[RMDB]
RNA sequence: GGGAACGACUCGAGUAGAGUCGAAAACCCACCAAGUUCUUAUCAAGAGAAGCAGAGACACUGGGUCGACGAAGCUUCAGCAACCGGUGUAAUGGCGAAAGCCAUGACCAAGGUGCUAAAUCCAGCAAGCUCGAACAGCUUGGAAGAUAAGAACAGAUAAAUUUAGCAGGUUCGCCUGCUAAAUUUAAAAAGAAACAACAACAACAAC
Reactivity to 2A3 in 0.01 (KOAc 150mM, MgCl2 10mM, bicine 150mM(pH8.5), 24C), signal-to-noise 2, nucleotides 027 to 156: c010c000c000a010c040c030a160a010g000u000u000c000u010u010a040u010c110a190a040g070a020g000a130a000g020c000a000g010a000g000a020c000a000c050u010g000g000g010u030c000g030a230c010g050a030a020g030c000u020u010c010a000g010c000a020a050c010c000g020g020u090g110u260a110a040u010g000g000c000g050a080a000a010g000c000c000a000u000g000a000c040c020a020a090g000g000u010g000c000u020a010a030a030u020c000c000a010g110c010a180a020g010c010u090c130g070a160a070c060a050g000c010u020u020g030g040a080a060g000a000u000a000a000g000a000a000c000a000g000a020
Reactivity to DMS in 0.01 (KOAc 150mM, MgCl2 10mM, bicine 150mM(pH8.5), 24C), signal-to-noise 1, nucleotides 027 to 156: c010c000c010a120c090c080a120a200g010u000u010c000u000u000a050u000c040a090a200g000a300g000a080a040g020c070a070g020a150g010a070c180a080c000u000g000g060g050u000c010g020a230c090g010a070a230g000c020u020u030c000a090g010c030a050a040c000c050g000g120u000g030u000a060a000u000g000g000c000g030a160a080a260g010c000c010a000u000g000a110c010c000a150a080g000g000u040g050c010u000a040a080a000u000c020c000a000g050c050a030a070g030c000u000c050g020a090a300c150a180g010c000u000u000g000g010a080a070g000a080u000a010a080g010a070a000c010a100g000a140
An RNA of 207 nucleotides, treated with 2A3 and DMS and read out base by base. Source: RMDB library OK3TST, as collected in RNAgym. For DMS the reverse transcriptase was MarathonRT. For DMS, 1,798 sequencing reads were counted. Conditions: 150 mM KOAc, 10 mM MgCl2 and 150 mM bicine (pH 8.5), 24 C. For 2A3 the reverse transcriptase was SuperScript II with manganese.